[RMDB]
RNA sequence: GGGAACGACUCGAGUAGAGUCGAAAAGCGCGGUUGAGCGCGUUGGCGGGCACCGUGUGUGAGCACGAUCCGCGCAGCCGUGAGCAGCGCCGCGCGGACGCGUUGGGGGCGUUGGCGGGCGGGGCCGUCUAAGGGACAGCUUCGGCUGUCCCUUAGAAAAAGAAACAACAACAACAAC
Reactivity to DMS in 0.01 (KOAc 150mM, MgCl2 10mM, bicine 150mM(pH8.5), 24C), signal-to-noise 2, nucleotides 027 to 126: g010c010g000c000g000g000u040u000g000a120g030c000g030c050g060u000u000g000g000c060g000g020g060c020a070c140c050g000u010g030u010g000u010g000a130g020c050a030c020g010a210u010c000c030g000c020g020c030a040g010c140c060g040u010g020a120g000c130a110g020c100g020c040c010g080c000g000c040g010g000a060c110g000c000g030u000u000g000g000g000g010g010c050g000u010u010g030g020c100g000g000g010c090g000g000g000g000c030c020g000
Reactivity to 2A3 in 0.01 (KOAc 150mM, MgCl2 10mM, bicine 150mM(pH8.5), 24C), signal-to-noise 2, nucleotides 027 to 126: g050c030g020c030g000g140u170u260g060a130g120c010g000c010g000u020u050g080g040c050g020g010g000c050a060c110c070g000u040g020u010g050u010g080a040g020c030a000c010g020a100u000c000c000g020c050g000c010a000g070c100c030g080u060g060a070g060c130a030g050c040g000c050c000g010c010g000c000g020g020a030c060g010c030g050u090u120g020g010g010g000g020c100g040u030u060g040g010c110g010g000g030c150g010g000g040g000c010c040g000